Structure probing data (2A3 and DMS) for a 177-nucleotide construct.

[RMDB]
RNA sequence: GGGAACGACUCGAGUAGAGUCGAAAACAGUCGCGAAGCGUAAAACCGUCAUGUGCGGUGACGAGAUUAAUCGCGGCACUCGGCAGACGACCAUUACGUUUAAAAACAUCGCUGGAGCCAGCAAAAACUAAUCAGUACUGUUCGCAGUACUGAUUAGAAAAGAAACAACAACAACAAC
Reactivity to 2A3 in 0.01 (KOAc 150mM, MgCl2 10mM, bicine 150mM(pH8.5), 24C), signal-to-noise 5, nucleotides 027 to 126: c010a010g070u070c020g000c010g080a050a030g020c000g010u040a040a080a030a080c020c000g010u020c070a250u180g090u130g130c010g000g020u010g020a010c030g020a000g000a100u150u190a140a150u080c020g000c000g020g000c000a020c020u050c020g050g000c020a020g000a080c020g040a060c040c010a020u040u110a040c040g030u030u070u090a090a120a010a010a010c040a050u120c060g000c020u030g060g040a030g090c080c010a010g030c050a050a030a030a010a030
Reactivity to DMS in 0.01 (KOAc 150mM, MgCl2 10mM, bicine 150mM(pH8.5), 24C), signal-to-noise 6, nucleotides 027 to 126: c120a110g010u000c050g010c030g010a050a090g010c030g020u010a030a040a090a070c060c010g010u000c020a080u010g020u010g020c080g020g010u000g000a020c010g000a080g000a110u010u000a090a090u000c010g000c000g010g000c010a040c020u020c030g010g000c010a050g000a050c030g010a090c070c100a180u000u000a030c070g000u000u000u010a040a080a100a100a060c110a140u010c110g010c010u000g010g010a170g000c060c020a070g010c120a040a060a070a080a130
Source information
The data come from the RNA Mapping Database (RMDB), library OK2TRN. 2A3 adducts were read by reverse transcription with SuperScript II with manganese. The RNA was probed in 150 mM KOAc, 10 mM MgCl2 and 150 mM bicine (pH 8.5) at 24 C. Reactivities are given for positions 27 through 126.